[RMDB]
RNA sequence: GGGAACGACUCGAGUAGAGUCGAAAAGGGUUGUACUACGUGCCGAUCAAUACCCACCUGACCGCCUCCGAGGCCGCCUACAUCGUCGACAACAGCGGUGCCAAAGCAAUUGUCGGUUCGGCGGCGCCAAGCACAAGACGUUCGCGUCUUGUGCUUGAAAAGAAACAACAACAACAAC
Reactivity to 2A3 in 0.01 (KOAc 150mM, MgCl2 10mM, bicine 150mM(pH8.5), 24C), signal-to-noise 4, nucleotides 027 to 126: g070g010g020u040u090g030u070a060c050u030a030c060g080u070g000c010c010g020a020u080c060a040a040u080a210c000c000c000a020c000c020u030g030a080c000c030g010c030c000u020c000c010g020a060g050g040c010c010g020c010c000u080a090c050a110u090c050g130u000c010g050a020c030a100a010c010a040g060c010g000g090u080g040c030c050a130a070a000g010c020a000a160u060u020g030u020c020g050g000u020u010c030g000g000c000g020g000c000g000c000
Reactivity to DMS in 0.01 (KOAc 150mM, MgCl2 10mM, bicine 150mM(pH8.5), 24C), signal-to-noise 4, nucleotides 027 to 126: g030g000g020u000u020g020u000a120c110u020a080c100g010u000g000c020c040g000a070u030c080a040a080u020a110c060c030c010a080c060c010u000g000a080c040c040g000c010c010u000c030c020g000a140g020g000c010c020g000c020c020u000a140c220a060u020c150g000u020c000g000a020c060a030a040c180a180g010c030g020g000u040g010c120c150a050a120a160g000c050a090a140u010u010g010u000c030g000g010u010u020c140g000g020c030g020g010c000g020c130

The record gives the reactivity of an RNA of 177 nucleotides to 2A3 and DMS. For 2A3, 3,305 sequencing reads were counted. The reactions ran in a buffer of 150 mM KOAc, 10 mM MgCl2 and 150 mM bicine (pH 8.5), at 24 C. For DMS the reverse transcriptase was MarathonRT.